Record summary: Source: RMDB library TTRDES, as collected in RNAgym. An RNA of 177 nucleotides, treated with 2A3 and DMS and read out base by base. For DMS, 6,301 sequencing reads were counted. Reactivities are given for positions 27 through 126. The reactions ran in a buffer of 150 mM KOAc, 10 mM MgCl2 and 150 mM bicine (pH 8.5), at 24 C.
RNA sequence: GGGAACGACUCGAGUAGAGUCGAAAAGAUAUGGACGUCCGCUGGCAUCGAUCUGGUUGAUCGGAAACGAUCACCAGGGAGCCAGUGGACGUCCUAAGUCAAAUCGCUUCAGUUCGCUGAAGCGAAAUCUUAGGAUAACCUUCGGGUUAUCCUAAGAAAAAGAAACAACAACAACAAC
Reactivity to 2A3 in 0.01 (KOAc 150mM, MgCl2 10mM, bicine 150mM(pH8.5), 24C), signal-to-noise 2, nucleotides 027 to 126: g030a020u090a060u120g000g000a000c000g020u030c010c000g000c020u010g000g000c010a190u300c210g070a030u020c010u030g050g040u270u300g030a000u010c030g040g000a040a030a050c000g020a010u030c020a000c000c000a010g000g010g000a000g000c000c000a000g000u010g010g010a010c020g000u000c000c000u000a000a000g000u000c010a010a010a090u040c000g000c010u000u000c000a020g080u070u120c240g000c120u000g020a000a010g000c000g000a000a010a000
Reactivity to DMS in 0.01 (KOAc 150mM, MgCl2 10mM, bicine 150mM(pH8.5), 24C), signal-to-noise 4, nucleotides 027 to 126: g010a030u000a300u010g000g000a010c000g020u010c000c000g010c010u000g010g000c000a300u010c240g000a050u010c000u000g010g020u000u010g030a010u010c000g010g000a080a100a180c000g000a010u000c010a040c010c000a010g000g000g010a020g030c000c000a000g010u010g000g020a010c010g010u000c000c000u000a000a050g010u010c040a110a120a140u000c000g010c000u000u000c000a000g000u010u010c280g030c000u000g000a010a010g010c000g000a000a030a040